This 207-nucleotide RNA was probed chemically with 2A3 and DMS. Reactivities are rounded to 0.1 and cut off at 0 and 3. The reactions ran in a buffer of 150 mM KOAc, 10 mM MgCl2 and 150 mM bicine (pH 8.5), at 24 C. The data come from the RNA Mapping Database (RMDB), library OK3TST. The 2A3 profile rests on 9,194 reads. For 2A3 the reverse transcriptase was SuperScript II with manganese. The DMS profile rests on 7,773 reads.

RNA sequence: GGGAACGACUCGAGUAGAGUCGAAAAGGAGCUCGGCAAGCUCUUAAUCGUAGGUAGAGCUUGCGUUCGCUCUACCUUACCACCGGAGCGAACUGUAGGGUCGGUGGUAUCGUGACUCUACAGUAAGGGCACGAUACGAUAUUGCUCUUACCGAGCACGUGUGCACCUUGUUCGCAAGGUGCAUGCGAAAAGAAACAACAACAACAAC
Reactivity to 2A3 in 0.01 (KOAc 150mM, MgCl2 10mM, bicine 150mM(pH8.5), 24C), signal-to-noise 5, nucleotides 027 to 156: g080g010a050g000c000u000c000g010g010c020a010a020g000c000u000c020u000u040a050a020u030c010g010u010a010g000g020u010a000g010a000g010c020u070u120g090c080g100u090u040c020g000c000u010c010u000a010c000c000u010u020a010c000c010a010c000c010g000g000a000g000c020g050a090a060c080u100g040u100a070g000g000g000u010c010g000g000u050g010g010u010a000u010c000g010u000g080a150c000u010c000u040a030c030a080g030u090a050a070g000g000g000c000a000c010g010a010u020a020c010g010a020u030a130u080u090g000c000u000c000u010u020a040c000c010g000a000g000c010a000
Reactivity to DMS in 0.01 (KOAc 150mM, MgCl2 10mM, bicine 150mM(pH8.5), 24C), signal-to-noise 3, nucleotides 027 to 156: g000g010a030g000c010u000c000g020g010c020a030a090g000c000u000c000u000u000a090a020u000c050g020u000a050g010g010u000a020g010a030g010c010u000u010g030c180g020u000u000c120g020c000u010c000u000a010c010c010u010u000a020c020c030a120c030c040g000g010a040g020c000g000a050a060c030u010g030u000a160g010g010g000u000c010g020g010u000g030g020u000a000u010c020g000u000g010a090c010u000c010u000a090c040a150g010u000a100a050g010g010g010c000a030c020g000a060u000a030c020g010a050u000a300u000u010g010c040u000c020u010u000a100c050c050g000a090g020c010a210